[RMDB]
RNA sequence: GGGAACGACUCGAGUAGAGUCGAAAAUACAAUCAAUGCAGCAGAACCUCAUGUGGUGACAGUCACCAUGAAUGGUGUGGCAGGUAGAAACCACAGUGUUAACUCCCAUGCUGCCACAACCCAAUAUGCCAAUGGGACAGUACUAUCUGGCCAAACAAGCACUCAUUACUUUCGAGUAAUGAGUGCUAAAAGAAACAACAACAACAAC
Reactivity to DMS in 0.01 (KOAc 150mM, MgCl2 10mM, bicine 150mM(pH8.5), 24C), signal-to-noise 2, nucleotides 027 to 156: u000a060c030a160a180u000c080a150a090u010g020c040a010g020c020a080g030a070a090c060c080u000c060a080u000g080u000g000g050u000g000a130c100a150g030u000c040a070c010c020a040u000g000a100a030u000g020g050u010g050u000g000g040c020a100g050g000u000a060g010a130a160a060c000c020a040c040a040g070u010g000u000u000a050a110c080u000c020c000c020a300u010g000c000u000g000c000c030a060c030a140a090c000c040c030a150a110u010a050u000g030c080c040a110a080u000g000g020g000a090c040a080g000u000a090c030u010a100u000c040u000g010g000c000c070a070a120a050c100a100
Reactivity to 2A3 in 0.01 (KOAc 150mM, MgCl2 10mM, bicine 150mM(pH8.5), 24C), signal-to-noise 4, nucleotides 027 to 156: u180a030c080a000a030u070c020a010a090u060g010c000a010g020c000a010g030a070a060c040c020u130c040a150u120g020u030g020g030u020g040a010c020a030g060u070c000a000c040c000a010u150g110a090a080u140g020g060u050g010u020g060g000c030a030g020g070u110a050g090a070a040a010c000c020a050c090a110g030u100g080u210u110a050a030c040u020c030c010c010a040u060g000c000u000g010c000c010a040c030a030a060c030c010c010a040a060u140a070u170g070c040c020a050a030u040g010g010g040a030c000a020g040u070a080c010u070a060u040c070u030g050g000c030c060a160a070a080c040a010

Source: RMDB library OK3TST, as collected in RNAgym. An RNA of 207 nucleotides, treated with DMS and 2A3 and read out base by base. For 2A3, 2,595 sequencing reads were counted. For DMS the reverse transcriptase was MarathonRT.